RNA sequence: GGGAACGACUCGAGUAGAGUCGAAAAGCUAUGUUACGAUUAUGUGACUUGCCAUAAUCGUAGGUACUCGACUACGUAACAUAGGUCGAGUUGCUGUCCGUACUGGCAAGUCACAGUACGACAGUAAUCGAGCCCUUACUGUGACAGCACUCAGGAACGAAUCUUGCUAGUUCGCUAGCAAGAUUCGAAAAGAAACAACAACAACAAC
Reactivity to 2A3 in 0.01 (KOAc 150mM, MgCl2 10mM, bicine 150mM(pH8.5), 24C), signal-to-noise 4, nucleotides 027 to 156: g040c020u050a040u170g040u020u070a030c040g010a130u080u050a080u190g000u010g010a010c010u020u020g000c010c000a090u150a130a070u170c050g000u040a020g000g020u030a000c000u030c010g020a010c020u070a030c030g180u150a200a060c040a120u140a090g000g080u020c030g000a010g000u040u110g020c000u010g070u040c060c000g020u020a010c030u010g000g000c020a000a000g010u020c000a010c000a000g000u000a010c030g040a030c050a020g020u030a010a020u090c060g030a010g040c000c010c000u010u030a020c010u010g060u040g090a030c040a050g030c020a020c010u050c020a040g080g030a050a090
Reactivity to DMS in 0.01 (KOAc 150mM, MgCl2 10mM, bicine 150mM(pH8.5), 24C), signal-to-noise 2, nucleotides 027 to 156: g000c010u000a050u020g030u000u010a030c020g000a110u000u010a120u000g000u000g010a060c030u000u020g000c020c030a140u000a100a160u020c030g060u000a070g000g010u000a010c020u010c030g000a090c020u000a120c040g010u020a100a060c070a050u000a030g010g020u010c010g020a060g010u000u000g020c000u010g000u020c110c010g030u000a130c190u000g030g030c000a090a030g010u000c060a100c010a010g000u000a040c120g010a120c020a070g010u000a010a010u000c030g020a100g010c050c030c090u000u000a040c020u000g020u000g000a060c030a140g050c040a080c120u000c050a180g020g010a080a260